Structure probing data (DMS and 2A3) for a 207-nucleotide construct.
The reactions ran in a buffer of 150 mM KOAc, 10 mM MgCl2 and 150 mM bicine (pH 8.5), at 24 C.
For DMS the reverse transcriptase was MarathonRT.

[RMDB]
RNA sequence: GGGAACGACUCGAGUAGAGUCGAAAAGAGUUUAUGCUCAUGAAUUAUGUUGAUAGCGACAGGAACGACACGCAACCCGACUUUGACUAUGUAUAUAUAAAGACGUGCGUGUACAUGGUCAGACAUCUCAAGCAAAUGAAGAUGAAACACUAUGGUCGACUAACUCUAAUUUCGAUUAGAGUUAGUCAAAAGAAACAACAACAACAAC
Reactivity to DMS in 0.01 (KOAc 150mM, MgCl2 10mM, bicine 150mM(pH8.5), 24C), signal-to-noise 4, nucleotides 027 to 156: g020a110g000u000u010u000a050u020g010c020u000c010a100u000g010a170a150u010u000a070u000g000u000u010g010a170u000a160g020c050g020a070c040a070g020g020a090a090c050g030a040c040a000c060g010c030a040a090c040c010c010g000a090c110u010u000u000g000a080c040u000a030u000g020u010a100u010a060u000a140u010a070a080a120g020a070c100g030u010g020c040g020u010g000u000a030c050a010u000g010g020u000c010a080g010a140c020a070u000c010u000c020a080a140g030c100a070a110a150u000g000a080a060g000a060u000g020a130a070a130c080a040c030u000a070u000g020g030u000c080
Reactivity to 2A3 in 0.01 (KOAc 150mM, MgCl2 10mM, bicine 150mM(pH8.5), 24C), signal-to-noise 8, nucleotides 027 to 156: g050a000g010u130u170u100a140u250g010c010u000c050a030u080g070a080a090u210u140a110u180g050u050u060g090a120u070a110g070c060g070a050c020a040g050g030a110a040c060g030a020c050a000c060g010c010a040a080c020c020c030g050a060c060u050u070u040g010a010c010u020a010u090g030u030a030u030a010u010a010u030a120a160a020g070a040c080g080u090g020c020g020u010g040u000a010c000a000u010g000g010u000c010a000g040a060c010a030u010c010u000c040a140a140g020c050a090a100a130u130g030a080a050g010a010u040g000a050a040a010c050a010c070u070a050u130g070g040u100c070